This 207-nucleotide RNA was probed chemically with 2A3 and DMS. The reactions ran in a buffer of 150 mM KOAc, 10 mM MgCl2 and 150 mM bicine (pH 8.5), at 24 C. DMS (dimethyl sulfate) methylates the pairing face of unpaired adenines and cytosines. 2A3 adducts were read by reverse transcription with SuperScript II with manganese. DMS adducts were read by reverse transcription with MarathonRT.

RNA sequence: GGGAACGACUCGAGUAGAGUCGAAAACCAGAUGACGGUCCUGCCAUGAGACCGCAACGAGUGCAUGUCGCAUCGAAUGGACUCGGGGAGUCGGCAGCUUGCCCCACGGAUGAGCGCCUAAUGCCGGAAGAGACGUGCAACUUCGGUUGCACGUCAACUUUAGGGAUGGAUUCGUCCAUCCCUAAAGAAAAGAAACAACAACAACAAC
Reactivity to 2A3 in 0.01 (KOAc 150mM, MgCl2 10mM, bicine 150mM(pH8.5), 24C), signal-to-noise 4, nucleotides 027 to 156: c020c000a030g060a110u110g070a070c030g000g020u010c010c010u090g150c070c020a180u170g020a050g020a160c000c010g000c030a030a040c010g040a000g050u050g070c020a000u090g100u270c050g000c180a120u110c110g030a020a080u040g010g050a010c020u010c040g010g000g020g000a050g060u100c020g010g000c000a030g010c060u070u070g050c020c010c000c030a060c070g040g020a160u090g010a020g030c020g010c020c030u060a110a030u100g030c020c000g010g050a050a020g080a040g000a060c000g000u000g000c000a000a000c000u050u050c170g060g000u000u000g000c000a000c020g000u000c000a000a000
Reactivity to DMS in 0.01 (KOAc 150mM, MgCl2 10mM, bicine 150mM(pH8.5), 24C), signal-to-noise 2, nucleotides 027 to 156: c020c000a210g010a100u010g010a080c000g020g000u000c020c030u000g000c100c210a180u010g000a070g030a030c000c050g050c000a050a050c060g010a050g060u010g010c030a050u010g010u010c040g040c090a090u010c030g010a070a250u000g010g020a050c040u010c030g030g000g010g000a070g000u000c020g030g020c020a090g010c050u020u000g020c020c000c000c050a190c090g030g000a060u010g000a060g000c020g050c020c010u010a060a070u000g010c030c000g000g010a100a160g000a230g020a010c000g000u000g000c000a010a000c000u010u010c280g070g000u020u000g000c000a000c010g000u000c000a000a040